Structure probing data (DMS and 2A3) for a 177-nucleotide construct. For 2A3 the reverse transcriptase was SuperScript II with manganese.
[RMDB]
RNA sequence: GGGAACGACUCGAGUAGAGUCGAAAAUCUACAAAUGUAAAUUUGAGCUUCUCAACAAGCGAAGCCAAAAGGUAUCCUUGUUUAAUCAAACACAUUUUGUCAUCGUUUGACAAACCCAGAUUGGAAACCUCACCAUAAAUUUCGAUUUAUGGUGAGGAAAAGAAACAACAACAACAAC
Reactivity to DMS in 0.01 (KOAc 150mM, MgCl2 10mM, bicine 150mM(pH8.5), 24C), signal-to-noise 3, nucleotides 027 to 126: u010c060u010a090c030a030a050a030u010g000u010a080a060a130u000u000u000g000a120g000c150u000u000c070u060c120a060a170c060a020a040g020c140g020a010a300g000c060c000a010a020a060a090g020g000u010a080u000c060c000u010u000g000u010u010u030a090a070u010c020a050a010a030c110a010c080a050u020u000u000u010g000u000c050a040u020c190g030u040u030u000g000a060c110a040a060a140c050c030c000a060g020a110u020u000g000g000a050a080a090
Reactivity to 2A3 in 0.01 (KOAc 150mM, MgCl2 10mM, bicine 150mM(pH8.5), 24C), signal-to-noise 6, nucleotides 027 to 126: u060c020u080a140c060a030a080a020u100g030u120a100a120a100u020u020u030g030a030g040c040u170u050c050u040c060a010a130c030a030a020g040c060g140a040a000g000c000c030a050a280a070a100g080g000u050a080u080c000c000u000u020g050u040u050u080a070a070u070c060a040a050a010c100a010c010a110u010u080u030u080g030u020c000a070u060c110g210u050u080u120g020a010c020a010a020a040c010c000c010a070g040a260u090u150g050g040a060a050a020
For DMS, 3,886 sequencing reads were counted. In probing experiments dimethyl sulfate is read out at A N1 and C N3, which are open when not base-paired.